[RMDB]
This 177-nucleotide RNA was probed chemically with 2A3 and DMS. Reactivities are given for positions 27 through 126.
RNA sequence: GGGAACGACUCGAGUAGAGUCGAAAAUGGCGAUCAAGUCGGCCAGCGUGUCGGCGUCCAGCAGCGGGGUAUCUCCCGAGGUGACCACGACGUUGCCGGCGUAGUCAUCGGGCAGCGCGGACAGCCCGUCGCCAUCACAAUUCGUUGUGAUGGCGACAAAAGAAACAACAACAACAAC
Reactivity to 2A3 in 0.01 (KOAc 150mM, MgCl2 10mM, bicine 150mM(pH8.5), 24C), signal-to-noise 1, nucleotides 027 to 126: u050g010g000c030g040a060u110c190a070a040g090u030c000g000g030c030c030a030g020c080g030u100g020u040c050g070g000c050g050u020c010c030a040g000c030a020g010c010g000g010g030g030u220a280u210c080u040c100c000c030g000a050g000g050u120g010a070c000c010a020c040g030a000c010g050u030u140g000c040c050g000g000c000g020u000a000g000u000c020a000u000c000g020g020g020c030a040g020c070g040c080g060g090a020c000a020g010c030c050c010
Reactivity to DMS in 0.01 (KOAc 150mM, MgCl2 10mM, bicine 150mM(pH8.5), 24C), signal-to-noise 1, nucleotides 027 to 126: u000g000g010c010g000a130u010c110a020a200g010u010c010g020g000c140c020a060g000c100g000u010g000u000c070g030g000c270g000u010c030c060a160g050c120a110g050c000g000g000g000g050u020a110u010c200u030c000c000c010g000a020g030g000u000g000a030c010c060a150c020g010a100c010g000u000u000g010c130c010g040g010c000g020u030a060g020u000c040a040u030c040g000g000g000c030a110g000c030g010c040g020g000a080c090a170g000c010c000c060